Notes:
Structure probing data (2A3) for a 177-nucleotide construct.
RNA sequence: GGGAACGACUCGAGUAGAGUCGAAAAUGCUUUGCUGCUGCGACGAGGGCGAUGUCGAGGUCGUGCCGCUGCCGCUGUGCUGAGGGCGGGUACGGGCGCGACUGCCUGCCGGUGUACCUGCCGCGCGCCCGGCCAAAAUCUUCGGAUUUUGGCCGGGAAAAGAAACAACAACAACAAC
Reactivity to 2A3 in 0.01 (KOAc 150mM, MgCl2 10mM, bicine 150mM(pH8.5), 24C), signal-to-noise 1, nucleotides 027 to 126: u050g010c020u030u130u200g020c080u010g070c000u000g000c000g000a040c000g040a150g080g000g000c030g040a060u100g050u100c030g020a010g050g070u040c040g030u040g050c000c060g050c100u160g000c000c000g010c000u060g060u130g050c070u060g120a120g070g030g010c010g000g000g060u030a030c070g010g000g000c000g000c070g040a090c040u030g000c010c030u010g030c060c010g050g000u070g000u050a080c000c050u050g000c030c000g010c000g010c000g000
The RNA was probed in 150 mM KOAc, 10 mM MgCl2 and 150 mM bicine (pH 8.5) at 24 C.